This 177-nucleotide RNA was probed chemically with 2A3 and DMS.
RNA sequence: GGGAACGACUCGAGUAGAGUCGAAAAUGCAGUGGCCGAGGCGAUCGGAUUGUGAUGUCGCCUGAAAAGGCGGGACCCAACGUCGCGCCUUUCGCCAGAAGAUGGAAAUAUGCGCAACGUCUGAGCUAUGAACUAUAGUGUUCGCACUAUAGUUCAUAAAAGAAACAACAACAACAAC
Reactivity to 2A3 in 0.01 (KOAc 150mM, MgCl2 10mM, bicine 150mM(pH8.5), 24C), signal-to-noise 9, nucleotides 027 to 126: u140g000c020a020g060u050g060g020c020c040g050a050g030g000c030g010a040u070c030g090g090a110u160u190g070u070g040a070u060g060u100c000g000c000c000u020g020a030a030a000a010g000g000c000g000g020g020a030c030c030c030a060a030c070g020u030c020g000c000g010c060c000u010u030u020c030g000c010c010a030g040a070a020g040a060u120g040g070a050a080a010u190a060u140g030c050g000c030a030a030c030g030u010c060u080g030a020g010c030u010
Reactivity to DMS in 0.01 (KOAc 150mM, MgCl2 10mM, bicine 150mM(pH8.5), 24C), signal-to-noise 8, nucleotides 027 to 126: u020g010c050a080g010u010g000g010c030c090g000a110g010g010c020g010a040u010c080g000g010a120u020u030g020u010g010a070u010g000u010c010g010c010c010u000g000a050a050a090a010g000g010c000g000g010g010a070c010c080c150a110a100c140g010u000c010g010c010g000c010c020u000u000u000c090g020c020c010a080g000a080a060g000a090u010g000g010a060a080a070u020a060u000g000c020g000c060a070a060c070g010u000c030u010g000a120g010c110u010
2A3 adducts were read by reverse transcription with SuperScript II with manganese.